[RMDB]
This 177-nucleotide RNA was probed chemically with DMS and 2A3. 2A3 adducts were read by reverse transcription with SuperScript II with manganese. It was measured as part of the RMDB library TTRDES. The reactions ran in a buffer of 150 mM KOAc, 10 mM MgCl2 and 150 mM bicine (pH 8.5), at 24 C. High 2A3 reactivity points to a flexible backbone, as in loops and unpaired stretches. For 2A3, 2,514 sequencing reads were counted.
RNA sequence: GGGAACGACUCGAGUAGAGUCGAAAAGAUAUGGAGAUACGGCUCAACAGCCUGUGGUCGGAAACGACCAUCAGGACAUGAGCCAGUAUCUCCUAAGUCAAAAGACGAUAGCUUCGGCUAUCGUCAACACCUAUCGAACCUUCGGGUUCGAUAGGUGAAAAGAAACAACAACAACAAC
Reactivity to DMS in 0.01 (KOAc 150mM, MgCl2 10mM, bicine 150mM(pH8.5), 24C), signal-to-noise 1, nucleotides 027 to 126: g010a030u000a100u020g000g020a010g010a000u020a000c020g000g030c000u000c000a090a070c170a130g000c000c000u010g070u010g000g010u000c000g060g000a000a020a060c010g000a010c000c000a010u000c020a010g060g050a010c060a250u010g020a020g000c000c000a020g010u000a000u010c000u010c000c000u000a010a050g020u010c000a180a090a120a220g020a020c020g000a000u000a010g010c000u000u010c270g000g040c000u000a000u000c000g010u000c000a070a150
Reactivity to 2A3 in 0.01 (KOAc 150mM, MgCl2 10mM, bicine 150mM(pH8.5), 24C), signal-to-noise 2, nucleotides 027 to 126: g010a010u030a000u040g010g000a030g010a000u010a000c000g000g000c010u010c060a300a220c090a240g010c020c000u030g030u000g010g020u010c010g000g000a000a010a010c000g000a000c010c000a020u250c060a000g010g020a010c070a300u300g000a010g020c020c010a010g000u000a000u000c000u000c000c000u010a000a000g010u010c010a030a020a060a200g000a010c020g010a020u000a020g010c040u080u140c300g170g000c000u020a000u050c030g020u000c000a000a000